Chemical mapping of a 177-nucleotide RNA with 2A3 and DMS. Conditions: 150 mM KOAc, 10 mM MgCl2 and 150 mM bicine (pH 8.5), 24 C. The DMS profile rests on 599 reads.
RNA sequence: GGGAACGACUCGAGUAGAGUCGAAAAGUCUAGCGAAUGGAUCCCACCCGGGACACACGCAAGUCGCGAAUUACGCCGACCGGCCAAGGUCAAUUGCAGAACUCAACUGCAUGAGUAAGCUAGACGAGACGGUAUGACCAUUCGUGGUCAUACCGUCAAAAGAAACAACAACAACAAC
Reactivity to 2A3 in 0.01 (KOAc 150mM, MgCl2 10mM, bicine 150mM(pH8.5), 24C), signal-to-noise 1, nucleotides 027 to 126: g000u000c000u000a010g010c030g050a080a080u140g040g020a020u010c000c000c000a000c000c040c040g000g050g080a020c000a000c000a010c140g000c030a050a020g060u030c030g030c000g020a110a150u300u140a170c080g020c110c050g020a010c010c000g010g000c090c000a040a060g010g000u010c030a010a070u070u020g040c000a010g000a170a060c040u100c150a120a140c040u030g000c020a000u030g010a040g010u010a040a000g000c000u010a000g000a020c000g010a010
Reactivity to DMS in 0.01 (KOAc 150mM, MgCl2 10mM, bicine 150mM(pH8.5), 24C), signal-to-noise 1, nucleotides 027 to 126: g000u000c000u020a010g030c000g000a080a130u010g000g010a120u000c000c000c000a170c300c010c030g000g040g010a090c050a130c150a200c290g000c040a130a060g010u000c090g000c030g010a100a130u000u000a130c090g030c050c040g000a040c000c290g000g040c090c150a060a110g000g000u000c000a110a240u010u000g000c000a030g000a130a120c230u000c230a100a060c000u000g010c000a000u000g000a080g000u000a140a230g000c040u000a000g000a030c040g000a100
Values cover nucleotides 27 to 126.